Chemical mapping of a 177-nucleotide RNA with 2A3.

RNA sequence: GGGAACGACUCGAGUAGAGUCGAAAAUUUCAAUCUGACAACUAAAACCACUCUUUUCAAGCAGAUCGGUGAGCGGCAUGAGGUCGUGAAUACAGGGUUCGCCACCGGUGAUGACAACGUGACGCGCAGUCCUGCUGCGCUUCGGCGCAGCAGGACUAAAAGAAACAACAACAACAAC
Reactivity to 2A3 in 0.01 (KOAc 150mM, MgCl2 10mM, bicine 150mM(pH8.5), 24C), signal-to-noise 1, nucleotides 027 to 126: u000u100u170c000a000a000u040c000u000g010a000c010a140a000c070u070a000a230a090a080c000c000a140c000u080c030u120u100u100u180c050a080a060g000c000a090g130a160u080c000g000g010u000g120a080g000c000g000g000c000a000u140g120a080g000g010u040c000g010u080g000a090a090u220a090c020a000g120g170g140u000u180c000g060c000c000a010c000c100g000g000u000g000a240u010g000a010c030a130a000c000g070u010g000a050c000g000c040g030c000